Conditions: 150 mM KOAc, 10 mM MgCl2 and 150 mM bicine (pH 8.5), 24 C. Chemical mapping of a 177-nucleotide RNA with 2A3 and DMS. For 2A3, 631 sequencing reads were counted. The DMS profile rests on 2,363 reads.

RNA sequence: GGGAACGACUCGAGUAGAGUCGAAAAAUGAAUGGCAAGACCUGGCAUUUGUCUGGGGUGUAGUUCUUUUUCUACUUAAGGGACAUGUGUCUCCUUUUUUGGAAGCAGCCCCAAUAGUUAGGAGAAAAUGAGAACCACUAUUCGUAGUGGUUCUCAUAAAAGAAACAACAACAACAAC
Reactivity to 2A3 in 0.01 (KOAc 150mM, MgCl2 10mM, bicine 150mM(pH8.5), 24C), signal-to-noise 1, nucleotides 027 to 126: a000u160g060a060a070u160g050g000c020a050a050g060a150c020c000u000g030g000c030a090u030u090u140g050u050c110u080g000g010g110g030u040g050u050a090g050u040u150c050u010u160u010u000u010c010u030a040c000u020u050a010a040g000g040g000a010c010a100u290g100u090g070u020c180u220c050c020u050u050u000u010u070u020g000g000a000a000g000c010a000g050c000c000c020c030a000a010u020a030g080u040u120a000g060g060a080g070a010a080a020
Reactivity to DMS in 0.01 (KOAc 150mM, MgCl2 10mM, bicine 150mM(pH8.5), 24C), signal-to-noise 3, nucleotides 027 to 126: a090u010g020a080a060u000g010g030c030a060a100g010a160c090c040u010g000g010c020a180u000u000u000g020u010c080u000g010g010g000g030u000g000u000a100g010u000u010c040u010u000u020u000u000c010u010a030c030u000u000a070a140g010g000g000a020c030a160u020g000u010g000u000c080u000c000c000u010u000u000u000u020u020g020g010a030a030g010c050a270g000c020c010c010c020a050a070u010a070g020u000u010a030g030g000a150g000a080a040a090